[RMDB]
RNA sequence: GGGAACGACUCGAGUAGAGUCGAAAAUCAUCCCCAGACGCGGUUCGCGGAGUGUUCGCAGACACCUUGUGCGUGCUGGCGCCCGUGACCGAACAGCGUAUCGAGGUACUGAUGCCCUGCAUCAGGACGUCUGAGCGACCGAUCGUCUACCGGGAACCAUCCCUAUCCCUUUCGAGGGAUAGGGAUGAAAAGAAACAACAACAACAAC
Reactivity to 2A3 in 0.01 (KOAc 150mM, MgCl2 10mM, bicine 150mM(pH8.5), 24C), signal-to-noise 4, nucleotides 027 to 156: u080c010a010u030c010c000c000c020a000g020a000c010g030c030g080g000u230u210c030g000c020g040g060a230g050u140g070u120u220c110g000c110a020g040a070c000a030c030c040u150u170g040u130g100c100g050u020g030c060u040g030g030c010g040c000c030c030g060u060g030a060c020c000g020a040a020c050a020g020c010g040u020a170u260c030g020a020g060g000u030a020c010u000g000a010u000g000c010c210c290u230g000c000a000u010c000a000g010g050a020c020g080u000c050u100g040a050g030c000g070a090c010c010g030a080u130c000g010u010c020u040a090c030c070g020g000g000a010a010c030
Reactivity to DMS in 0.01 (KOAc 150mM, MgCl2 10mM, bicine 150mM(pH8.5), 24C), signal-to-noise 1, nucleotides 027 to 156: u000c040a100u020c020c000c000c070a060g010a060c060g030c030g030g020u000u010c020g000c050g000g000a120g060u000g000u000u000c100g050c070a080g010a040c030a050c020c100u010u010g030u000g030c020g000u000g020c020u000g020g000c000g030c020c010c110g020u010g040a110c040c000g020a090a070c050a070g040c060g010u030a130u000c100g010a040g010g010u000a070c020u000g010a020u000g000c000c170c060u000g010c060a060u010c000a040g020g010a030c020g000u000c020u020g010a060g000c000g000a120c030c030g000a090u010c020g030u000c030u000a110c060c010g000g010g000a090a110c190
Conditions: 150 mM KOAc, 10 mM MgCl2 and 150 mM bicine (pH 8.5), 24 C. This 207-nucleotide RNA was probed chemically with 2A3 and DMS. The 2A3 profile rests on 2,493 reads. 2A3 is a SHAPE reagent: it acylates the 2'-hydroxyl of flexible nucleotides of all four kinds. For DMS, 3,013 sequencing reads were counted. 2A3 adducts were read by reverse transcription with SuperScript II with manganese. High DMS reactivity at an A or C suggests that its Watson-Crick edge is free.